[RMDB]
RNA sequence: GGGAACGACUCGAGUAGAGUCGAAAAUGUCUCCCUGAAGUGAUGCAUAACCGAUCAGGAUCUACUCAUGUCAACUUUGGUAAAGUUAUGUUGCUUGUCAGGGUGAGUAACGGGCUCUUCGGAGCCCACUCAACUUCAUCUUCGGAUGAAGUUGAGUAAAAGAAACAACAACAACAAC
Reactivity to 2A3 in 0.01 (KOAc 150mM, MgCl2 10mM, bicine 150mM(pH8.5), 24C), signal-to-noise 2, nucleotides 027 to 126: u170g030u010c000u010c000c000c020u010g000a020a010g010u060g110a100u150g040c010a030u010a030a010c000c030g060a080u090c030a030g030g030a050u040c040u090a110c070u080c130a120u220g110u120c030a110a070c150u190u250u110g050g000u080a090a030a020g000u010u000a000u040g020u090u140g030c040u160u180g090u160c000a000g000g010g010u040g040a030g050u010a120a020c090g000g020g000c000u000c000u010u070c140g030g000a000g020c020c000c000
Reactivity to DMS in 0.01 (KOAc 150mM, MgCl2 10mM, bicine 150mM(pH8.5), 24C), signal-to-noise 3, nucleotides 027 to 126: u000g000u000c020u000c000c000c010u000g000a020a050g000u000g000a080u010g000c020a000u010a020a030c030c080g000a130u010c040a040g010g010a100u000c070u000a060c160u010c180a100u010g020u010c130a100a120c060u000u000u000g020g010u000a070a140a060g000u000u000a020u000g010u010u000g000c080u000u020g000u000c010a020g000g010g020u010g000a080g010u000a070a060c150g010g000g010c000u000c000u000u010c120g030g000a010g000c000c000c000
The data come from the RNA Mapping Database (RMDB), library RFMREP. The record gives the reactivity of an RNA of 177 nucleotides to 2A3 and DMS. For DMS the reverse transcriptase was MarathonRT.